[RMDB]
The record gives the reactivity of an RNA of 207 nucleotides to DMS and 2A3. Reactivities are given for positions 27 through 156. It was measured as part of the RMDB library OK3TST. For 2A3, 1,219 sequencing reads were counted. For DMS, 3,768 sequencing reads were counted.

RNA sequence: GGGAACGACUCGAGUAGAGUCGAAAAAGGCGCGCAGUUAGCACAGCCAUUUUGCUUCAAGUUUUGCCACAUUCACAGCUUUUGCUUCACAAGGCUUAGUUUUCAAGCAAGGCAGAGAGUUAGAGCAUUAGGCCACAAGUUAGCAUUAGCAUUUUGCAAAAGUCAGAAUGUUCGCAUUCUGACUUUUAAAAGAAACAACAACAACAAC
Reactivity to DMS in 0.01 (KOAc 150mM, MgCl2 10mM, bicine 150mM(pH8.5), 24C), signal-to-noise 2, nucleotides 027 to 156: a080g000g020c040g040c030g020c040a160g030u000u010a070g000c060a070c030a180g000c010c010a120u000u000u000u010g020c020u000u000c070a050a130g000u010u010u000u000g010c020c020a120c130a130u020u000c080a120c110a120g000c020u000u000u000u000g020c010u020u000c090a080c080a090a110g010g040c030u000u010a050g010u000u000u000u000c060a060a080g040c030a050a090g020g010c020a120g000a080g010a130g000u000u010a090g000a100g010c030a070u000u000a070g000g010c000c030a060c110a040a110g020u010u000a080g000c010a090u010u000a090g020c030a230u000u000u000u000g010c110
Reactivity to 2A3 in 0.01 (KOAc 150mM, MgCl2 10mM, bicine 150mM(pH8.5), 24C), signal-to-noise 2, nucleotides 027 to 156: a000g040g000c040g030c000g010c070a060g080u070u090a030g040c010a020c020a050g020c040c010a030u110u120u020u000g030c030u050u070c070a090a080g030u030u050u060u090g050c000c000a070c020a090u100u070c050a040c020a070g000c000u050u050u080u110g010c040u070u070c040a080c040a110a050g000g000c000u010u050a000g020u070u020u050u120c060a080a030g020c010a010a040g070g000c050a030g060a000g030a000g080u090u030a040g010a000g060c020a020u010u030a010g000g000c000c000a020c020a050a010g060u060u060a000g000c020a070u010u010a010g070c010a040u150u170u020u210g180c020